[RMDB]
Structure probing data (DMS) for a 177-nucleotide construct. For DMS the reverse transcriptase was MarathonRT. Source: RMDB library RFMREP, as collected in RNAgym. The DMS profile rests on 772 reads. The reactions ran in a buffer of 150 mM KOAc, 10 mM MgCl2 and 150 mM bicine (pH 8.5), at 24 C.
RNA sequence: GGGAACGACUCGAGUAGAGUCGAAAACUCCAAUAGCGUAUAUUAUUGAUGUUGCAGUUAAAAAGUUCGUAGUUUGACUUUGCCUGUUUAUUAGAUUCUAAAUAUUAUGUUUGGAAUCAAUUUAAGCCAGACAUGAAUACUUCGGUAUUCAUGUCUGAAAAGAAACAACAACAACAAC
Reactivity to DMS in 0.01 (KOAc 150mM, MgCl2 10mM, bicine 150mM(pH8.5), 24C), signal-to-noise 1, nucleotides 027 to 126: c030u010c130c030a030a030u000a000g010c070g030u000a100u010a120u000u010a120u020u020g000a050u010g000u010u010g010c270a040g010u000u010a020a180a050a030a030g000u010u000c160g000u000a080g000u010u000u030g000a010c000u000u010u000g000c050c010u010g000u000u010u000a010u000u010a250g000a020u000u000c000u010a010a000a020u000a090u020u030a120u030g000u000u000u010g010g000a020a010u000c010a030a080u010u000u010a030a010g030c100